[RMDB]
RNA sequence: GGGAACGACUCGAGUAGAGUCGAAAAACGGCCUCUACGGAGGCCGAAAAGAUUAAAGCCUGGAAGCGAUUCGCAGGAAAACCUUAGAGGAGUCAAAGAUAUGACAAGUACUGGUACGCCAGUACAAAAUAGGACCAUCAUUCGUGAUGGUCCUAUUAAAAGAAACAACAACAACAAC
Reactivity to 2A3 in 0.01 (KOAc 150mM, MgCl2 10mM, bicine 150mM(pH8.5), 24C), signal-to-noise 4, nucleotides 027 to 126: a000c030g000g000c030c000u000c020u040a070c210g090g000a000g010g010c000c000g010a000a010a000a000g020a000u040u220a160a020a040g000c000c000u000g030g000a000a050g020c030g110a190u000u070c110g050c070a000g020g020a000a110a020a050c010c030u100u110a050g020a070g150g070a030g050u080c020a100a120a070g060a140u130a050u180g060a020c020a060a060g000u000a000c000u000g000g020u040a030c210g040c060c010a000g000u000a000c000a030a020
Reactivity to DMS in 0.01 (KOAc 150mM, MgCl2 10mM, bicine 150mM(pH8.5), 24C), signal-to-noise 3, nucleotides 027 to 126: a140c010g020g000c010c010u000c000u000a110c130g100g000a030g000g000c000c000g010a010a020a050a110g010a080u020u010a160a170a140g010c030c000u000g000g010a050a040g010c270g010a210u010u010c010g000c020a000g000g000a070a070a070a120c040c030u000u010a080g010a110g000g000a170g020u000c020a060a140a140g000a120u040a020u010g010a040c060a080a150g000u000a000c000u000g000g020u010a080c260g030c020c010a010g000u000a000c000a040a050